This 177-nucleotide RNA was probed chemically with 2A3.
It was measured as part of the RMDB library OK1LIB.
2A3 adducts were read by reverse transcription with SuperScript II with manganese.
The reactions ran in a buffer of 150 mM KOAc, 10 mM MgCl2 and 150 mM bicine (pH 8.5), at 24 C.
Values are in units of 0.01, from 0 to 300, in steps of 10.
RNA sequence: GGGAACGACUCGAGUAGAGUCGAAAAGUAUGGUGGGUGUGGAAGCCCUACUGGUGGUGUCACGACAUCCAACACGCAUCUAGCACAGCAGCGUGUAGCUCACUAGGGUGACAUCACCUGCCCAGCAGGCGUACGGCUGAUUCGUCAGCCGUACGCCAAAAGAAACAACAACAACAAC
Reactivity to 2A3 in 0.01 (KOAc 150mM, MgCl2 10mM, bicine 150mM(pH8.5), 24C), signal-to-noise 1, nucleotides 027 to 126: g170u150a130u200g040g000u040g120g050g000u090g010u070g040g020a060a000g060c000c000c000u010a030c060u030g020g020u000g000g000u000g000u030c000a000c030g030a030c100a070u000c040c050a000a030c000a000c070g060c000a040u000c090u130a010g000c030a000c010a070g030c000a000g000c060g010u000g000u000a050g000c000u000c050a160c000u080a000g020g000g020u030g070a000c000a000u000c000a000c000c010u000g050c000c000c000a030g160c030a100